[RMDB]
RNA sequence: GGGAACGACUCGAGUAGAGUCGAAAAGGAUACGAGCUCAGACUGAUGGGAUCGCGGUUGGCCCUGUCCUCGUGUCAGCCGCUAAAACUUAGAGGAAUCGCGUCGCUGGAUCCUGCCCGUCGGAGCCAGGGACGUUAAAUCAGAAGACGGACCUAAGGGUGAUACAGAACUUCGGUUCUGUAUCACCAAAAGAAACAACAACAACAAC
Reactivity to 2A3 in 0.01 (KOAc 150mM, MgCl2 10mM, bicine 150mM(pH8.5), 24C), signal-to-noise 2, nucleotides 027 to 156: g080g000a030u070a160c100g020a030g010c020u020c030a020g000a220c130u160g060a130u080g030g010g010a010u000c040g000c000g010g010u000u010g000g010c000c010c040u060g010u020c000c000u000c000g000u000g010u010c000a000g000c000c000g000c000u020a000a000a030a070c120u150u250a040g000a000g010g000a010a000u010c010g010c000g030u000c010g010c300u000g000g000a020u000c000c010u020g000c000c000c000g010u020c000g000g000a000g030c000c000a020g010g000g030a000c000g000u000u000a010a010a030u230c030a000g010a000a030g000a010c000g000g000a010c010c030u060a060a050g130
The data come from the RNA Mapping Database (RMDB), library ARCHII. An RNA of 207 nucleotides, treated with 2A3 and read out base by base.